[RMDB]
RNA sequence: GGGAACGACUCGAGUAGAGUCGAAAAUGUGAGGGCAGCUGUGGGUCACCUUCACCUCCUGGGGUGAAUGGUUUUAUUGCAUGUGCUCUGGUCCUGGAGGCAGGAAUCCCUCAAUGCGCACAGCACCAUCGAAGUACUGGUUCGCCAGUACUUCGAUAAAAGAAACAACAACAACAAC
Reactivity to DMS in 0.01 (KOAc 150mM, MgCl2 10mM, bicine 150mM(pH8.5), 24C), signal-to-noise 2, nucleotides 027 to 126: u010g010u010g000a050g000g000g010c070a040g020c050u010g040u010g010g010g030u010c150a060c000c000u010u000c010a030c010c030u000c050c160u020g040g000g040g000u000g010a030a020u030g020g000u000u000u000u020a090u020u010g010c030a080u000g010u000g010c040u000c020u000g000g020u000c010c000u000g010g020a130g020g000c060a030g010g010a100a100u000c030c010c020u000c120a080a060u000g000c030g000c030a050c040a080g000c060a140c200c090
Reactivity to 2A3 in 0.01 (KOAc 150mM, MgCl2 10mM, bicine 150mM(pH8.5), 24C), signal-to-noise 2, nucleotides 027 to 126: u160g050u040g040a060g030g020g090c020a030g020c080u060g050u010g070g060g030u080c070a020c000c000u010u040c000a020c040c000u070c040c030u190g080g000g000g000u030g080a030a100u270g000g080u020u100u070u140a160u040u150g020c030a020u050g060u070g070c010u030c040u050g050g010u040c000c030u020g060g010a040g050g160c000a000g000g060a070a090u060c000c020c000u000c120a090a030u120g000c050g000c020a030c020a050g010c020a050c030c000
This 177-nucleotide RNA was probed chemically with DMS and 2A3. The DMS profile rests on 2,104 reads. For DMS the reverse transcriptase was MarathonRT. For 2A3 the reverse transcriptase was SuperScript II with manganese. Reactivities are given for positions 27 through 126. Conditions: 150 mM KOAc, 10 mM MgCl2 and 150 mM bicine (pH 8.5), 24 C. It was measured as part of the RMDB library OK2TRN.